[RMDB]
RNA sequence: GGGAACGACUCGAGUAGAGUCGAAAAACUGAGGAUUCGUCCUCAGUAAAAAGAUAUGGAAUCCUAGAGCUUUUGACGCUUAGUGGUUCGGAAACGAACCAUGGGAGCGAUAAGCUUCAGGAUUCCUAAGUCAAAAAGUGAUUGUUCGCAAUCACAAGCUUAAGUCGGUGUUCGCACCGACUUAAGCAAAAGAAACAACAACAACAAC
Reactivity to 2A3 in 0.01 (KOAc 150mM, MgCl2 10mM, bicine 150mM(pH8.5), 24C), signal-to-noise 1, nucleotides 027 to 156: a000c000u000g000a000g020g000a000u050u210c200g040u010c080c000u000c000a010g000u000a000a000a000a000a000g030a030u110a030u110g000g000a000a000u000c020c000u050a060g000a000g030c030u050u040u130u180g160a140c030g000c000u000u000a020g000u000g020g010u000u000c000g010g000a060a070a050c000g010a000a000c000c000a000u000g080g030g010a010g020c000g010a000u050a010a000g000c010u110u050c000a000g010g000a000u000u000c000c000u000a000a000g020u000c060a000a000a020a080a070g000u000g000a000u010u010g080u070u060c220g000c080a020a000u000c000a000c020a020a020
Overview: The record gives the reactivity of an RNA of 207 nucleotides to 2A3. The RNA was probed in 150 mM KOAc, 10 mM MgCl2 and 150 mM bicine (pH 8.5) at 24 C. Source: RMDB library RNAMAK, as collected in RNAgym. Reactivities are given for positions 27 through 156.